[RMDB]
RNA sequence: GGGAACGACUCGAGUAGAGUCGAAAACGGUUAUAGCUCCGAAAGCGAAUUAUUUAUUAGCGAAUAAAUUUCCAUACUGAGGAAGGGAUCUUGUCGUACAGUUUAUUCAUGGUCAAUUCGGCGAGGCGAUGCUAAUUUUAUUCGUAAAAUUAGCAUCAAAAGAAACAACAACAACAAC
Reactivity to 2A3 in 0.01 (KOAc 150mM, MgCl2 10mM, bicine 150mM(pH8.5), 24C), signal-to-noise 6, nucleotides 027 to 126: c020g000g030u090u080a130u080a200g020c030u020c030c010g080a110a030a020g020c020g000a030a050u090u050a030u130u240u060a100u060u100a070g070c010g030a030a020u060a040a080a010u080u050u000c020c010a040u070a170c050u100g040a040g070g040a030a050g040g010g010a010u010c020u030u040g020u030c010g030u020a070c030a090g010u040u090u090a140u110u100c050a070u070g050g010u060c050a050a090u110u030c030g010g030c010g010a020g030g010c060
Reactivity to DMS in 0.01 (KOAc 150mM, MgCl2 10mM, bicine 150mM(pH8.5), 24C), signal-to-noise 8, nucleotides 027 to 126: c060g000g000u010u000a080u010a130g020c050u000c020c040g000a070a120a130g020c040g010a080a100u000u010a060u000u010u000a050u010u010a130g020c090g010a080a030u000a030a040a070u000u000u000c030c020a090u010a100c130u000g000a120g010g010a080a070g010g010g000a050u000c040u000u000g020u000c050g000u000a080c090a050g010u000u000u010a060u020u010c080a080u000g010g000u000c090a050a160u000u000c040g010g010c040g010a040g020g020c170